Structure probing data (2A3 and DMS) for a 177-nucleotide construct.
Conditions: 150 mM KOAc, 10 mM MgCl2 and 150 mM bicine (pH 8.5), 24 C.

[RMDB]
RNA sequence: GGGAACGACUCGAGUAGAGUCGAAAAGGCACGAGGGCAUCGGGAUCGUUCGCCGAGAUGGCGAUCCCGUCCACCCUGGUGGCGAUGAGGUUCUCGAUGAUCUCGAUCUGCCCCUCGGCCGUGGGAGUACCCAGGGCAUGUUCGCAUGCCCUGGGUAAAAAGAAACAACAACAACAAC
Reactivity to 2A3 in 0.01 (KOAc 150mM, MgCl2 10mM, bicine 150mM(pH8.5), 24C), signal-to-noise 2, nucleotides 027 to 126: g060g000c070a050c280g000a010g010g010g020c000a000u000c000g010g000g000a000u020c010g060u140u080c010g000c010c050g050a270g050a100u240g040g000c020g000a010u020c030c000c000g020u000c000c000a060c000c000c050u100g040g000u020g020g070c170g000a010u070g030a030g130g200u250u100c090u000c080g030a030u070g000a000u010c000u000c020g000a030u040c100u100g000c050c040c020c000u020c000g000g000c000c010g000u100g030g040g030a070g090
Reactivity to DMS in 0.01 (KOAc 150mM, MgCl2 10mM, bicine 150mM(pH8.5), 24C), signal-to-noise 2, nucleotides 027 to 126: g000g020c000a080c020g020a050g010g000g030c060a060u010c010g000g000g000a010u000c000g030u000u000c020g010c010c010g020a110g000a140u010g000g020c040g010a100u000c020c040c020g000u010c010c020a040c020c030c080u030g010g030u000g010g000c200g010a060u000g010a070g010g000u010u000c060u000c020g010a030u000g000a010u000c000u000c000g020a020u000c150u030g000c240c000c010c010u000c000g010g000c020c010g000u010g010g000g010a190g030
Record summary: Values cover nucleotides 27 to 126. 2A3 is a SHAPE reagent: it acylates the 2'-hydroxyl of flexible nucleotides of all four kinds. Source: RMDB library OK2TST, as collected in RNAgym.